[RMDB]
RNA sequence: GGGAACGACUCGAGUAGAGUCGAAAACAAAACUGACCAUCUAUGAGGUCAUACAUCGUCAUAGGAAAACAAAACAAAACUGACCAGGUAUGAGGUCAUACAUCGUCAUAACAAACAAAACAACAAAAUCGGACCUAGGAUUCGUCCUAGGUCCGAUAAAAGAAACAACAACAACAAC
Reactivity to 2A3 in 0.01 (KOAc 150mM, MgCl2 10mM, bicine 150mM(pH8.5), 24C), signal-to-noise 2, nucleotides 027 to 126: c030a000a100a010a050c060u030g000a000c000c000a030u000c000u010a010u000g000a010g010g090u000c030a040u200a030c050a060u170c050g040u070c020a010u130a030g100g060a000a000a160a000c060a030a070a000a000c000a120a090a000a000c080u050g000a020c000c000a010g030g030u070a020u140g150a010g100g060u030c000a000u000a000c070a000u040c040g040u030c000a020u020a240a020c020a050a190a000c070a080a100a140a060c190a030a100c100a040a040a000
Structure probing data (2A3) for a 177-nucleotide construct. Conditions: 150 mM KOAc, 10 mM MgCl2 and 150 mM bicine (pH 8.5), 24 C. Source: RMDB library OK1LIB, as collected in RNAgym.